[RMDB]
RNA sequence: GGGAACGACUCGAGUAGAGUCGAAAAUGGAUCAUAAAUUUGCUCAAUGCUCUCUGGAGCUUCUGUGUUACCACGUUGGAGAGAGUGUUGAUUUGGACUCCCUGAUAGGGCUUAGGCAUCUUUCAGCCGGCAUUAUGGAAUUCGUUCCAUAAUGCCGAAAAGAAACAACAACAACAAC
Reactivity to DMS in 0.01 (KOAc 150mM, MgCl2 10mM, bicine 150mM(pH8.5), 24C), signal-to-noise 3, nucleotides 027 to 126: u030g000g020a100u020c100a080u020a040a110a140u040u030u000g000c160u000c010a030a020u000g000c010u010c000u000c030u010g030g000a120g040c040u010u000c030u020g020u020g000u000u020a150c180c020a040c080g020u020u000g010g010a040g000a040g000a030g010u000g020u000u000g010a040u000u000u010g020g010a060c100u000c040c060c010u000g000a060u000a050g020g000g020c030u000u010a090g020g020c030a070u010c030u000u000u010c050a050g000c150
Reactivity to 2A3 in 0.01 (KOAc 150mM, MgCl2 10mM, bicine 150mM(pH8.5), 24C), signal-to-noise 5, nucleotides 027 to 126: u070g070g030a050u060c040a050u150a170a140a090u150u120u190g030c000u000c010a000a000u020g010c000u000c000u030c000u020g090g040a100g120c000u110u020c070u120g080u010g050u110u100a130c110c020a010c040g040u040u040g070g030a000g000a000g010a020g010u010g000u020u000g050a040u110u020u070g050g020a040c040u010c000c000c010u010g030a030u070a120g050g020g000c020u050u040a090g060g020c030a030u060c010u000u080u050c020a030g040c050
Structure probing data (DMS and 2A3) for a 177-nucleotide construct.
Reactivities are given for positions 27 through 126.
Reactivities are rounded to 0.1 and cut off at 0 and 3.
The RNA was probed in 150 mM KOAc, 10 mM MgCl2 and 150 mM bicine (pH 8.5) at 24 C.